[RMDB]
RNA sequence: GGGAACGACUCGAGUAGAGUCGAAAAUCCUAAGUCUUAUCGGGAGUCAUGGAGGAGACAACAGCUUAUCGGAAACGAUAAGACAUGUCUUGAAGUGACAUCGAUCGAUAAGAUAUGGAAAAACCCCUACGUAGGCGUUCGCGCCUACGUAGGGGAACAUGUAGAUGACCUUCGGGUCAUCUACAUGAAAAGAAACAACAACAACAAC
Reactivity to DMS in 0.01 (KOAc 150mM, MgCl2 10mM, bicine 150mM(pH8.5), 24C), signal-to-noise 1, nucleotides 027 to 156: u000c000c010u020a120a210g010u000c000u000u000a000u000c020g020g010g020a100g040u010c020a040u010g010g020a300g000g040a030g020a020c000a010a090c090a170g130c000u000u000a000u000c020g040g020a190a070a250c020g000a010u000a000a000g000a010c080a190u000g020u010c010u000u020g000a300a300g000u000g000a010c000a100u000c170g020a140u030c000g000a060u000a020a020g010a060u000a130u000g040g000a040a110a130a110a130c010c010c000c010u000a000c040g070u010a000g000g030c020g050u000u000c300g040c070g000c030c020u000a000c010g000u000a000g000g000g020g020a000a030
Reactivity to 2A3 in 0.01 (KOAc 150mM, MgCl2 10mM, bicine 150mM(pH8.5), 24C), signal-to-noise 3, nucleotides 027 to 156: u050c010c000u040a170a060g030u010c010u020u000a000u000c000g020g050g030a030g000u000c000a000u030g030g030a130g150g210a010g020a010c020a060a030c060a050g040c010u000u000a000u010c010g000g030a140a040a080c020g000a000u000a010a000g020a070c020a100u020g000u000c000u010u030g040a050a020g000u000g010a010c050a190u050c020g100a100u080c010g000a000u000a010a000g000a000u040a050u060g010g030a030a090a070a080a060c000c050c050c010u050a000c010g000u000a000g010g020c010g020u050u130c240g020c010g020c120c000u000a000c010g010u010a000g000g000g000g000a000a000
The data come from the RNA Mapping Database (RMDB), library RNAMAK. This 207-nucleotide RNA was probed chemically with DMS and 2A3. For DMS, 1,504 sequencing reads were counted. Reactivities are given for positions 27 through 156. For DMS the reverse transcriptase was MarathonRT. For 2A3 the reverse transcriptase was SuperScript II with manganese.